Structure probing data (2A3 and DMS) for a 177-nucleotide construct.
For 2A3, 895 sequencing reads were counted.
It was measured as part of the RMDB library OK2TST.
The RNA was probed in 150 mM KOAc, 10 mM MgCl2 and 150 mM bicine (pH 8.5) at 24 C.
[RMDB]
RNA sequence: GGGAACGACUCGAGUAGAGUCGAAAAUGGCGCAGUAUCCGGCGUUUACCUUUAGCGCCUCCGUCGCCACCAUUACUGGCCUGCUGUUUUAUGUGACCUCGGCGGACUCCGGGGCGCUGGUGCUGGGGCGUGAUAGCAUUUUCGAAUGCUAUCACGCAAAAGAAACAACAACAACAAC
Reactivity to 2A3 in 0.01 (KOAc 150mM, MgCl2 10mM, bicine 150mM(pH8.5), 24C), signal-to-noise 1, nucleotides 027 to 126: u090g050g000c030g000c060a010g050u160a110u170c060c010g040g000c040g000u060u060u210a270c000c000u000u150u280a090g040c100g020c000c040u010c020c030g110u090c010g040c020c000a000c050c010a050u110u210a050c060u080g080g010c030c030u090g030c060u030g110u160u060u030u110a120u170g100u030g070a080c000c000u040c020g010g010c000g050g030a070c020u000c090c030g020g000g000g020c000g020c030u010g030g000u030g060c020u000g020g020g030
Reactivity to DMS in 0.01 (KOAc 150mM, MgCl2 10mM, bicine 150mM(pH8.5), 24C), signal-to-noise 2, nucleotides 027 to 126: u010g000g060c010g000c030a060g020u000a090u020c110c090g020g000c040g030u000u000u010a120c050c050u010u000u000a100g020c040g010c010c010u000c050c050g040u010c050g020c040c020a060c070c120a110u010u000a080c090u000g010g020c060c040u000g040c040u010g010u010u010u000u010a060u000g000u000g000a110c000c020u000c050g000g010c090g020g000a100c100u020c110c150g000g010g020g000c030g010c020u000g000g010u000g000c020u010g000g020g010